[RMDB]
RNA sequence: GGGAACGACUCGAGUAGAGUCGAAAAACUUGUAUGGGCGAUUAAUAAAUCUUCUGUAAAUGCUGUAAGAGGAUUACCCCUUGAGGUUUCAGCACUAGGCUGCUCUAGCGAUUAAUCAAUGCAUUUGUAACGGAAAGACAGUUCGCUGUCUUUCCAACAUCGGUAUAGAGUUCGCUCUAUACCGAUGAAAAGAAACAACAACAACAAC
Reactivity to DMS in 0.01 (KOAc 150mM, MgCl2 10mM, bicine 150mM(pH8.5), 24C), signal-to-noise 1, nucleotides 027 to 156: a120c060u000u020g050u000a090u000g040g040g070c020g000a140u000u000a040a070u000a090a030a120u000c010u000u000c010u000g010u010a090a110a100u000g010c030u010g010u010a140a080g010a020g010g000a130u000u010a140c040c000c010c060u010u010g080a080g010g020u000u010u000c030a010g050c090a060c030u000a090g000g010c080u010g000c130u010c010u000a120g000c000g020a100u010u000a060a060u000c040a100a180u000g030c020a100u000u000u000g020u000a080a120c110g000g010a020a000a050g010a040c000a020g020u000u000c300g060c000u000g040u000c010u000u000u000c010c010a030a080
Reactivity to 2A3 in 0.01 (KOAc 150mM, MgCl2 10mM, bicine 150mM(pH8.5), 24C), signal-to-noise 2, nucleotides 027 to 156: a000c050u100u070g030u070a080u170g050g000g030c060g050a050u070u200a130a090u170a130a110a090u010c050u070u000c010u070g130u110a060a130a120u080g070c030u070g110u120a060a050g040a000g010g030a000u020u100a040c000c010c010c020u030u090g040a050g040g000u000u050u150c030a030g000c010a030c060u060a050g150g080c030u060g000c010u090c010u070a030g040c030g070a050u000u140a060a010u090c130a040a080u110g040c030a020u070u040u110g080u050a070a050c080g000g020a000a000a000g020a000c010a000g030u030u100c160g010c100u000g000u000c000u020u000u000c000c000a000a000
About this RNA:
The data come from the RNA Mapping Database (RMDB), library M2RFPK. Structure probing data (DMS and 2A3) for a 207-nucleotide construct. The reactions ran in a buffer of 150 mM KOAc, 10 mM MgCl2 and 150 mM bicine (pH 8.5), at 24 C. For DMS the reverse transcriptase was MarathonRT. The DMS profile rests on 1,770 reads. The 2A3 profile rests on 1,045 reads.